This 177-nucleotide RNA was probed chemically with DMS.
Reactivities are rounded to 0.1 and cut off at 0 and 3.
The RNA was probed in 150 mM KOAc, 10 mM MgCl2 and 150 mM bicine (pH 8.5) at 24 C.
The DMS profile rests on 9,985 reads.

RNA sequence: GGGAACGACUCGAGUAGAGUCGAAAAAAGACUAAACCCUGUGAAAUGGCUAUGGCACCAAGAACAUUGCUUCUUUGUUGCCUUUUGUUGGGUGUAGUGAGUUUUGAGAACCCACCGCUCAAUGUAGUGAAACGUUGUAAUUCGUUACAACGUUUCAAAAAGAAACAACAACAACAAC
Reactivity to DMS in 0.01 (KOAc 150mM, MgCl2 10mM, bicine 150mM(pH8.5), 24C), signal-to-noise 6, nucleotides 027 to 126: a060a060g010a140c100u010a080a080a080c020c000c010u000g010u010g000a100a090a070u000g020g010c120u000a050u010g000g000c020a030c060c060a010a020g010a020a010c020a210u000u010g010c180u000u000c010u000u000u010g010u000u000g010c000c010u000u010u000u000g010u000u000g000g000g020u000g010u000a070g020u000g000a040g020u000u010u010u000g000a190g000a050a030c020c010c000a040c040c030g010c000u000c010a040a040u010g010u000a070g020